[RMDB]
RNA sequence: GGGAACGACUCGAGUAGAGUCGAAAAGAUAUGGAUAGGACAUCGAUCACAAUCCAAUCGGAAACGAUUGGAGUUGUGGGAGUCCGUCCUAAGUCAAAAGGGAGGAAUAGUUCGCUAUUCCUCCCAAUCAACUACACUACUUCGGUAGUGUAGUUGAAAAAGAAACAACAACAACAAC
Reactivity to DMS in 0.01 (KOAc 150mM, MgCl2 10mM, bicine 150mM(pH8.5), 24C), signal-to-noise 5, nucleotides 027 to 126: g010a040u000a300u010g000g000a010u000a090g050g000a010c000a150u000c110g000a110u010c010a010c010a020a070u010c000c000a010a000u000c010g020g000a100a070a140c010g010a000u000u000g000g000a010g020u000u000g010u000g000g000g010a050g000u000c010c010g000u000c000c000u000a030a100g010u000c030a060a060a100a130g000g000g010a010g000g000a020a000u000a000g000u000u010c230g030c000u000a010u000u000c000c000u000c000c000c000a000a000
Reactivity to 2A3 in 0.01 (KOAc 150mM, MgCl2 10mM, bicine 150mM(pH8.5), 24C), signal-to-noise 3, nucleotides 027 to 126: g040a010u060a030u130g040g000a040u080a300g070g010a040c050a300u170c120g140a130u100c030a020c000a030a010u000c000c010a000a000u010c010g010g050a040a040a020c010g000a010u010u010g020g000a030g040u040u070g020u010g040g000g020a020g010u010c010c000g000u000c000c000u010a130a020g060u030c010a010a040a090a130g000g020g010a000g000g000a000a000u020a000g020u060u130c300g030c170u010a000u000u010c000c000u010c000c000c000a000a000